[RMDB]
RNA sequence: GGGAACGACUCGAGUAGAGUCGAAAAUCGCGUCAUCAUGGAUGGAUCCUCUGUGGAUCGAUACUAGUGCCAUGUCUAGCGGAUCGAUCACGUCGAUCAUAGUACGGUACGCGCUAGGGAUCGUACGGCUAACUGUAGGGUUCGCCCUACAGUUAGCAAAAGAAACAACAACAACAAC
Reactivity to DMS in 0.01 (KOAc 150mM, MgCl2 10mM, bicine 150mM(pH8.5), 24C), signal-to-noise 5, nucleotides 027 to 126: u000c060g010c050g010u000c050a070u000c100a080u010g030g000a070u000g010g010a040u000c010c030u010c200u020g020u010g010g010a040u000c010g000a050u000a080c080u000a050g010u000g000c020c050a120u010g000u000c030u000a050g010c170g010g010a030u000c020g000a030u010c150a110c170g000u000c030g010a020u010c010a070u000a030g000u010a030c030g000g010u000a080c120g010c050g010c050u020a020g010g000g000a030u000c010g010u000a060c080g000
Reactivity to 2A3 in 0.01 (KOAc 150mM, MgCl2 10mM, bicine 150mM(pH8.5), 24C), signal-to-noise 5, nucleotides 027 to 126: u060c020g000c020g100u070c020a090u010c010a040u120g110g000a030u050g070g010a030u040c000c010u060c130u190g180u180g080g050a040u030c010g010a020u030a090c010u020a020g040u000g100c020c010a050u090g060u030c020u020a040g060c150g130g020a020u010c010g020a010u040c080a040c220g090u030c010g000a020u010c000a030u030a020g050u090a010c010g030g020u030a030c040g000c010g000c050u030a020g060g000g050a020u030c010g040u070a030c070g060
Description:
Source: RMDB library OK2TRN, as collected in RNAgym. An RNA of 177 nucleotides, treated with DMS and 2A3 and read out base by base. The reactions ran in a buffer of 150 mM KOAc, 10 mM MgCl2 and 150 mM bicine (pH 8.5), at 24 C. For 2A3, 7,471 sequencing reads were counted. Reactivities are given for positions 27 through 126.